The record gives the reactivity of an RNA of 177 nucleotides to DMS. The DMS profile rests on 453 reads. DMS adducts were read by reverse transcription with MarathonRT. The RNA was probed in 150 mM KOAc, 10 mM MgCl2 and 150 mM bicine (pH 8.5) at 24 C.
[RMDB]
RNA sequence: GGGAACGACUCGAGUAGAGUCGAAAAUCUCCGCGCUCGGCGUGCAGGCCAAGACAAACACCACCACAGCCGACGGAUCCGACAACGCCGAGAAACAGCUCAUCGCUGAGGCUGAGGGGGCCACCGAUCCGUUGUGACAGUUCGCUGUCACAACGGAAAAAGAAACAACAACAACAAC
Reactivity to DMS in 0.01 (KOAc 150mM, MgCl2 10mM, bicine 150mM(pH8.5), 24C), signal-to-noise 1, nucleotides 027 to 126: u000c070u000c010c070g000c110g030c010u000c030g000g020c020g050u060g080c210a090g040g000c040c100a110a100g010a040c160a030a170a240c170a140c130c040a020c030c040a050c110a110g000c000c020g020a050c070g000g000a030u000c080c050g010a110c140a080a070c010g020c010c000g030a040g000a040a010a210c040a010g000c160u010c180a110u000c230g000c190u000g000a080g000g040c040u000g020a160g010g020g060g000g000c070c040a020c130c070g010a070